Chemical mapping of a 177-nucleotide RNA with 2A3 and DMS. The DMS profile rests on 6,196 reads. For DMS the reverse transcriptase was MarathonRT. Reactivities are given for positions 27 through 126.
[RMDB]
RNA sequence: GGGAACGACUCGAGUAGAGUCGAAAAACCUCUUGCCCUGAGUGGAUGGACGAUUUUGAGGCGGAUCCUAAAGGCAAAUAUGCCCAGAAUCUGCUUAAGAAGUUGAUUGGCGGUGAUGUCACUCCAGCUUUUAGGAUAUCUUCGGAUAUCCUAAAAGAAAAGAAACAACAACAACAAC
Reactivity to 2A3 in 0.01 (KOAc 150mM, MgCl2 10mM, bicine 150mM(pH8.5), 24C), signal-to-noise 3, nucleotides 027 to 126: a000c000c020u030c010u020u090g040c000c010c020u050g060a050g040u090g070g020a070u040g070g010a020c020g010a020u030u020u020u130g040a030g010g000c010g010g010a020u000c000c020u070a140a080a030g000g000c000a040a020a060u300a090u140g020c000c000c000a000g020a010a020u000c000u000g000c000u050u020a040a020g040a030a030g050u070u060g060a130u030u090g050g010c040g020g010u080g040a070u110g020u020c020a020c060u020c020c020a030g040
Reactivity to DMS in 0.01 (KOAc 150mM, MgCl2 10mM, bicine 150mM(pH8.5), 24C), signal-to-noise 5, nucleotides 027 to 126: a090c020c000u000c080u000u000g000c040c020c040u000g000a110g030u000g000g000a070u010g020g010a110c040g010a090u000u000u000u010g000a120g010g010c010g010g010a010u010c020c010u000a060a110a100g000g010c010a030a120a150u020a090u010g010c010c020c080a110g000a020a010u000c010u000g010c000u000u010a090a090g000a030a050g010u000u010g010a130u000u010g000g020c070g030g010u000g010a080u000g000u000c050a060c060u010c040c070a110g000